[RMDB]
RNA sequence: GGGAACGACUCGAGUAGAGUCGAAAAUCCGAUUCCAGUUUUCCCGUAAAGGAAUGUCCUUGGUGGCCGCUCAGGUGUUCGGUUCUUCCGCAGUACGUCGCAGCUUCGAGUCCUGUAUCAGGAGCCUCCUGUCCGGUAACUUCGGUUACCGGACAGGAAAAGAAACAACAACAACAAC
Reactivity to 2A3 in 0.01 (KOAc 150mM, MgCl2 10mM, bicine 150mM(pH8.5), 24C), signal-to-noise 1, nucleotides 027 to 126: u120c010c000g000a050u070u120c000c020a080g030u000u000u000u120c010c010c000g150u230a030a020a020g050g000a120a060u040g050u100c030c000u030u070g120g030u020g010g000c000c000g000c020u010c020a080g070g000u000g040u130u010c000g000g000u050u050c030u070u070c000c000g050c030a010g050u020a050c040g050u000c000g020c050a070g020c050u110u090c010g010a000g050u000c010c010u050g000u060a030u110c130a030g070g000a000g100c010c020u000